[RMDB]
RNA sequence: GGGAACGACUCGAGUAGAGUCGAAAAACAGUGGCAAUUAAUCCGGGUCAGAGGUGAUGAUGACUUUGCUUACGAUGUUAGAGGAGGAGGUAGUGAGAAGUGGUCGGAGUCUGGAUUCAUUUUAUCUUUCUAAAAGCUAACAGAGCUUGCACAUGGACCACUAAUGCGUGUUCGCACGCAUUAGUGGAAAAGAAACAACAACAACAAC
Reactivity to 2A3 in 0.01 (KOAc 150mM, MgCl2 10mM, bicine 150mM(pH8.5), 24C), signal-to-noise 3, nucleotides 027 to 156: a000c050a020g030u040g040g000c030a020a070u090u070a110a060u140c090c050g040g000g000u080c070a040g010a030g060g040u050g020a070u050g010a010u060g030a030c000u080u050u070g040c020u050u040a050c050g040a050u060g030u110u070a070g010a030g070g000a030g020g010a030g020g040u050a040g010u040g050a050g010a110a020g040u040g040g010u030c040g000g010a030g020u000c020u050g020g030a050u050u050c010a030u070u040u050u010a100u060c070u040u090u000c010u030a090a100a020a020g010c020u030a060a080c030a090g060a040g100c000u030u030g030c080a080c010a140u130g000g040a010
Reactivity to DMS in 0.01 (KOAc 150mM, MgCl2 10mM, bicine 150mM(pH8.5), 24C), signal-to-noise 1, nucleotides 027 to 156: a060c040a110g030u000g000g020c080a060a160u000u000a100a070u000c060c030g010g000g030u030c050a140g030a150g010g020u020g020a140u010g010a080u000g030a070c020u000u000u010g010c110u000u010a090c040g000a140u000g000u000u000a080g020a110g060g040a080g030g020a090g020g000u010a050g010u000g000a070g020a050a110g050u010g010g010u000c050g000g010a080g050u000c050u030g010g000a100u000u000c060a080u030u010u010u020a050u000c010u000u000u000c070u030a040a060a060a010g000c000u000a040a090c070a040g010a080g040c040u000u000g000c040a050c090a130u000g000g010a300